[RMDB]
RNA sequence: GGGAACGACUCGAGUAGAGUCGAAAAGGGAUUUUAUUAAGGGCUUAAUUCAGGGGAGAGGGUCCAGUGGUGGUAGGCUGGACACGAGAACCACCUUAUGUACAGAAAUGGUCCAGUGGCAAUGAGCCGGACAAAGUAACCACUGGCUCAGUGGCAGAGGACACUGUAGUUUCGACUACAGUGUCCUAAAAGAAACAACAACAACAAC
Reactivity to 2A3 in 0.01 (KOAc 150mM, MgCl2 10mM, bicine 150mM(pH8.5), 24C), signal-to-noise 1, nucleotides 027 to 156: g120g000g040a090u130u200u150u240a090u280u300a060a100g010g000g000c020u050u110a000a070u300u180c070a050g010g000g000g000a170g060a100g000g000g020u010c000c020a010g000u050g030g040u010g000g100u010a010g040g040c000u000g020g000a050c040a010c100g180a180g010a090a000c000c000a000c000c020u090u090a160u110g020u040a040c010a070g150a050a100a020u020g000g000u000c010c010a050g010u040g000g010c000a070a040u040g000a000g000c000c040g000g010a010c050a040a160a000g040u110a000a040c030c100a070c000u090g000g020c000u000c040a060g050u070g000g040c050a110g010
This 207-nucleotide RNA was probed chemically with 2A3. The reactions ran in a buffer of 150 mM KOAc, 10 mM MgCl2 and 150 mM bicine (pH 8.5), at 24 C. For 2A3 the reverse transcriptase was SuperScript II with manganese. The data come from the RNA Mapping Database (RMDB), library OK3TST.